[RMDB]
RNA sequence: GGGAACGACUCGAGUAGAGUCGAAAAGAAGGCGGCCGGCUCGAGCGCAUCGGCCUCCUGGUACGAGAACAUCGUCUGGAACAGCCCGGUGCCGUCACGCUCGCGCCGCGCGUUCACGUCGGCCGCACAGCGAGCGGGUAUUCGUACCCGCUCGCUGAAAAGAAACAACAACAACAAC
Reactivity to 2A3 in 0.01 (KOAc 150mM, MgCl2 10mM, bicine 150mM(pH8.5), 24C), signal-to-noise 1, nucleotides 027 to 126: g160a020a020g120g010c000g000g020c000c000g020g010c030u000c080g000a010g010c030g000c030a070u160c050g000g010c000c010u050c000c020u010g000g020u230a000c000g010a000g010a200a050c060a200u020c000g020u030c070u060g030g030a080a050c010a030g010c000c080c050g000g000u030g060c140c040g050u070c030a060c160g030c030u060c010g000c000g010c000c000g080c030g000c020g010u050u040c010a030c040g020u020c050g000g000c000c020g050c010a040
Reactivity to DMS in 0.01 (KOAc 150mM, MgCl2 10mM, bicine 150mM(pH8.5), 24C), signal-to-noise 1, nucleotides 027 to 126: g000a130a150g010g010c030g000g030c050c000g040g000c020u010c150g000a010g020c040g050c010a140u000c090g000g000c030c090u000c300c000u000g000g040u000a020c030g030a020g000a180a050c110a150u000c020g000u000c030u010g000g000a050a170c300a100g000c040c040c070g030g020u000g000c020c030g000u030c110a090c120g010c040u000c050g030c090g010c000c000g000c190g000c000g030u000u000c020a140c080g000u000c000g000g000c010c000g010c010a090